Chemical mapping of a 177-nucleotide RNA with 2A3. Reactivities are given for positions 27 through 126. It was measured as part of the RMDB library OK1LIB.

[RMDB]
RNA sequence: GGGAACGACUCGAGUAGAGUCGAAAAAACAGCAACUCCCUGGCCCGCUAUAUGCUGGUCGCCAGCGCGAUUGGUUCGCUGUAUAAGAUGAACGCCUCCAUCUCCGGCGCCGAAGUCGGCUGCCAGGGGGUCCAGCUACUUUCGAGUAGCUGGACCCAAAAGAAACAACAACAACAAC
Reactivity to 2A3 in 0.01 (KOAc 150mM, MgCl2 10mM, bicine 150mM(pH8.5), 24C), signal-to-noise 1, nucleotides 027 to 126: a000a000c060a000g070c020a000a010c050u030c070c000c000u000g000g000c000c070c000g000c040u080a090u020a020u300g070c070u060g010g010u070c080g010c110c000a110g010c210g000c030g060a100u100u300g050g000u080u070c000g000c040u040g020u000a140u070a040a050g000a030u090g070a030a070c070g140c030c000u040c010c000a010u000c000u050c120c000g020g040c010g000c010c020g070a110a000g240u300c030g010g000c130u120g050c000c000a000g000g000